[RMDB]
An RNA of 177 nucleotides, treated with 2A3 and DMS and read out base by base. For 2A3 the reverse transcriptase was SuperScript II with manganese. DMS adducts were read by reverse transcription with MarathonRT. The RNA was probed in 150 mM KOAc, 10 mM MgCl2 and 150 mM bicine (pH 8.5) at 24 C. It was measured as part of the RMDB library RFM100. High 2A3 reactivity points to a flexible backbone, as in loops and unpaired stretches.
RNA sequence: GGGAACGACUCGAGUAGAGUCGAAAAGAAAGAAAGAAAUGGGGCCCUGGCUGGGAUAUCAUCAUAUACUGUAAGUUUGCGAUGAGACACUACAGUAUAGAUGAUGUACUAGUCCGGGCACCCUCAAGUGAAGGGGAAUUUUCGAAUUCCCCUUCACAAAAGAAACAACAACAACAAC
Reactivity to 2A3 in 0.01 (KOAc 150mM, MgCl2 10mM, bicine 150mM(pH8.5), 24C), signal-to-noise 3, nucleotides 027 to 126: g120a000a080a010g040a020a100a010g070a030a190a060u170g030g000g010g010c000c000c000u000g040g000c000u000g000g000g000a020u000a000u010c000a000u000c110a000u010a000u000a060c000u010g030u010a100a130g030u100u200u150g160c160g050a200u210g050a220g060a110c040a000c040u010a000c000a000g000u000a000u000a000g000a000u000g000a000u000g000u000a000c000u000a000g000u000c010c000g010g000g000c000a020c000c000c000u010c030a090a070
Reactivity to DMS in 0.01 (KOAc 150mM, MgCl2 10mM, bicine 150mM(pH8.5), 24C), signal-to-noise 1, nucleotides 027 to 126: g000a130a060a080g000a100a030a120g020a050a080a060u040g010g000g010g030c010c000c000u000g020g000c000u010g040g000g020a040u020a010u000c020a000u000c000a060u010a000u000a010c010u000g030u000a010a130g000u000u020u000g030c010g000a280u040g000a250g030a020c070a020c040u030a020c000a020g000u000a000u000a000g010a000u000g010a000u000g010u000a020c000u000a010g000u000c010c110g020g000g000c000a020c000c000c000u000c160a020a120